Background
An RNA of 177 nucleotides, treated with DMS and 2A3 and read out base by base. 2A3 is a SHAPE reagent: it acylates the 2'-hydroxyl of flexible nucleotides of all four kinds. It was measured as part of the RMDB library OK2TRN.
[RMDB]
RNA sequence: GGGAACGACUCGAGUAGAGUCGAAAAGGCGUCUUCGCUGCCUCGGCCGCCAUGCACUGACCGGUAGCCGCCGUAAUGGCGGCAUUGUUCCCAUAAACGGAUGUGGGUGUGGGUGCCGAAGUAGCAGCGUAUACUCGGGAUUCGUCCCGAGUAUACGAAAAGAAACAACAACAACAAC
Reactivity to DMS in 0.01 (KOAc 150mM, MgCl2 10mM, bicine 150mM(pH8.5), 24C), signal-to-noise 6, nucleotides 027 to 126: g000g010c100g010u000c060u010u000c120g010c010u000g020c010c070u000c020g000g000c010c070g000c010c010a040u000g010c010a040c010u010g010a140c020c000g000g010u010a130g000c000c010g020c010c000g010u010a120a100u020g010g020c000g010g000c000a010u000u010g000u000u000c000c000c010a180u010a040a120a100c020g010g000a200u010g020u010g010g010g030u000g010u000g010g000g010u000g010c010c000g000a020a040g010u000a050g020c010a090g010
Reactivity to 2A3 in 0.01 (KOAc 150mM, MgCl2 10mM, bicine 150mM(pH8.5), 24C), signal-to-noise 4, nucleotides 027 to 126: g100g010c050g080u040c070u140u090c070g010c010u000g000c000c000u000c010g000g010c020c030g030c030c010a080u060g020c010a010c050u070g120a090c020c000g010g010u040a030g010c000c000g000c010c000g020u120a080a150u230g000g000c000g020g000c000a000u000u050g000u010u010c010c000c010a030u100a020a180a010c020g000g010a080u130g060u140g230g040g010u030g000u050g020g010g030u100g000c000c000g000a020a010g010u040a010g000c020a000g030